[RMDB]
RNA sequence: GGGAACGACUCGAGUAGAGUCGAAAAGCGGCCGCGGGCACCCGAGCCACCGCCGAAAUCCGUUGCUGUUUGGCGCCGGGGAUGACCACGUCUUUGGUCAGCUGGGUGUAGGAGUCGCGGAAGGUUCCUCAUCGCGAUUAUUCGUAAUCGCGAUGAGAAAAGAAACAACAACAACAAC
Reactivity to DMS in 0.01 (KOAc 150mM, MgCl2 10mM, bicine 150mM(pH8.5), 24C), signal-to-noise 2, nucleotides 027 to 126: g040c000g000g010c070c020g000c090g000g000g000c050a070c000c020c000g000a200g000c020c040a150c200c060g030c060c060g000a020a060a070u020c090c060g000u010u000g000c070u020g000u010u010u010g010g030c000g020c150c050g020g000g000g010a090u000g030a050c030c000a030c300g000u060c080u020u030u010g020g010u010c000a090g010c050u000g020g000g000u000g010u000a110g000g040a120g000u010c030g020c020g000g020a180a080g000g030u000u000c040
Reactivity to 2A3 in 0.01 (KOAc 150mM, MgCl2 10mM, bicine 150mM(pH8.5), 24C), signal-to-noise 3, nucleotides 027 to 126: g030c030g010g030c020c030g080c060g070g050g000c050a020c020c010c000g030a000g010c010c020a060c020c020g010c000c010g040a110a060a020u080c050c040g070u100u080g040c030u090g030u150u180u150g030g000c020g000c030c020g050g000g060g020a040u080g050a050c010c010a090c080g160u100c210u150u140u070g030g000u010c040a010g000c020u110g000g020g020u060g020u000a060g050g110a070g030u090c020g000c020g030g000a070a050g040g020u060u040c010